[RMDB]
RNA sequence: GGGAACGACUCGAGUAGAGUCGAAAAAUACUCCACAACCCACGCAAGCGCCAACGAGCGCGUCCGCAAGGUGACCAUCCAGCGGACCCGGGAGGAGACUCCUGAGUUGCGCUACCAAAUUGCAAUGAUUUUUAUCCGUGUUCGCACGGAUAAAAAUAAAAGAAACAACAACAACAAC
Reactivity to DMS in 0.01 (KOAc 150mM, MgCl2 10mM, bicine 150mM(pH8.5), 24C), signal-to-noise 1, nucleotides 027 to 126: a090u010a200c130u010c000c040a040c080a080a080c040c020c010a180c100g010c050a000a040g000c010g020c000c080a190a090c300g020a100g030c010g000c060g020u000c070c000g040c010a150a140g000g010u000g010a190c220c120a010u010c000c000a300g000c000g000g030a010c000c000c020g000g000g000a020g000g000a260g010a170c000u020c000c010u000g000a030g010u020u000g000c030g000c110u000a110c140c070a080a050a120u020u000g010c120a030a070u000g000